The data come from the RNA Mapping Database (RMDB), library OK1LIB. The record gives the reactivity of an RNA of 177 nucleotides to DMS and 2A3. For 2A3 the reverse transcriptase was SuperScript II with manganese. For DMS the reverse transcriptase was MarathonRT.
RNA sequence: GGGAACGACUCGAGUAGAGUCGAAAAGCCACUCGCUCCUAUUUCAGCCAAAGAACUCGCGGGGAUGACUCCUGCCCAGAGGAUGCGUCGACUGAAAGCAGAGCGUGACUCGAGGCUGCAGCGCGUGCCUGGGAUGCCAGUUCGCUGGCAUCCCAGGAAAAGAAACAACAACAACAAC
Reactivity to DMS in 0.01 (KOAc 150mM, MgCl2 10mM, bicine 150mM(pH8.5), 24C), signal-to-noise 1, nucleotides 027 to 126: g000c000c000a220c070u000c000g000c000u000c010c000u100a220u000u000u030c010a000g000c100c040a030a150a080g000a170a240c140u000c020g000c180g000g030g000g000a020u000g000a140c080u000c030c140u000g000c020c070c010a030g000a000g000g000a060u020g000c020g000u000c030g040a140c020u000g000a080a010a030g010c260a260g040a090g000c020g000u050g030a230c060u040c130g000a140g000g000c010u080g040c110a100g010c020g000c030g010u000g000
Reactivity to 2A3 in 0.01 (KOAc 150mM, MgCl2 10mM, bicine 150mM(pH8.5), 24C), signal-to-noise 2, nucleotides 027 to 126: g100c000c000a050c010u010c040g010c000u010c040c000u030a090u020u030u070c020a040g020c020c000a060a070a060g090a050a010c040u020c080g040c040g040g030g020g020a040u120g030a100c010u040c050c000u010g020c060c010c030a000g000a030g080g020a030u150g030c040g080u080c080g000a100c000u060g000a110a040a010g000c090a000g020a040g000c000g000u000g070a080c040u050c120g000a060g000g030c000u020g000c020a050g020c010g010c010g080u060g030